Background: This 177-nucleotide RNA was probed chemically with DMS and 2A3. 2A3 adducts were read by reverse transcription with SuperScript II with manganese.
RNA sequence: GGGAACGACUCGAGUAGAGUCGAAAAAAUCUGGCCCGGUGUUCAGAUCUCACUGGUGCCACCUCACUGGCAGAGGCAAUCGAUCUGAUGAGCUGUGCGGAUACCGUGAUCUCCAAUGAUUCGGGGCCUGACUACAUAUUUUCGAAUAUGUAGUCAGAAAAGAAACAACAACAACAAC
Reactivity to DMS in 0.01 (KOAc 150mM, MgCl2 10mM, bicine 150mM(pH8.5), 24C), signal-to-noise 8, nucleotides 027 to 126: a080a030u000c050u000g000g020c010c010c010g010g020u000g010u000u000c060a050g000a050u010c040u000c150a060c030u000g010g010u010g020c010c020a040c090c050u010c160a100c180u000g010g000c060a050g010a170g000g000c090a090a060u010c160g010a050u000c030u000g000a100u000g000a100g010c050u000g000u000g010c030g010g000a080u000a070c050c020g010u000g010a030u000c020u000c060c100a070a100u010g000a120u000u000c050g010g000g000g010c260
Reactivity to 2A3 in 0.01 (KOAc 150mM, MgCl2 10mM, bicine 150mM(pH8.5), 24C), signal-to-noise 5, nucleotides 027 to 126: a000a000u050c040u040g120g000c020c010c010g040g010u030g010u030u070c060a050g000a170u020c050u030c030a030c030u060g060g060u090g050c000c000a010c010c020u100c020a080c080u060g050g000c040a010g010a030g120g020c040a040a080u130c050g040a020u010c010u050g020a070u040g060a040g000c030u030g010u050g050c030g020g010a040u040a100c020c020g040u060g040a050u040c030u040c050c020a060a110u140g050a060u050u060c030g020g010g000g030c010